[RMDB]
RNA sequence: GGGAACGACUCGAGUAGAGUCGAAAACGAAGAACAUGCCAAGCAGUAGGGAAGAAGAGAAAGUGACGGUACCUGCAGAAGAAGCUCCGGCUAACAACGUAACAGCAGACGCAGCAAGGCAUGAAAACGUCAUGAUAUCCUUCGGGAUAUCAUGACGAAAAGAAACAACAACAACAAC
Reactivity to 2A3 in 0.01 (KOAc 150mM, MgCl2 10mM, bicine 150mM(pH8.5), 24C), signal-to-noise 2, nucleotides 027 to 126: c020g020a080a060g050a090a020c010a030u000g000c020c020a000a040g000c000a030g000u130a000g010g030g000a040a050g020a100a030g100a090g040a030a140a000g130u050g090a030c040g000g030u010a020c000c000u020g000c040a020g030a140a000g030a040a000g040c060u030c070c050g050g060c000u040a080a020c070a050a000c080g170u150a020a020c020a040g080c010a000g000a070c080g010c010a030g000c010a060a060g000g000c020a000u030g040a040a000a000a000
Reactivity to DMS in 0.01 (KOAc 150mM, MgCl2 10mM, bicine 150mM(pH8.5), 24C), signal-to-noise 2, nucleotides 027 to 126: c040g060a100a160g000a110a230c000a020u000g000c020c010a080a300g020c030a060g050u000a100g050g000g000a100a040g000a110a080g000a030g000a010a140a050g000u000g000a050c130g000g010u000a050c200c020u000g030c070a010g000a000a070g000a130a120g020c010u000c200c110g000g000c040u030a020a050c260a040a190c140g000u050a070a090c160a070g000c010a080g030a130c110g060c100a020g020c060a100a140g000g000c020a000u000g060a080a110a120a080

Chemical mapping of a 177-nucleotide RNA with 2A3 and DMS.
Source: RMDB library OK1LIB, as collected in RNAgym.
For DMS, 1,732 sequencing reads were counted.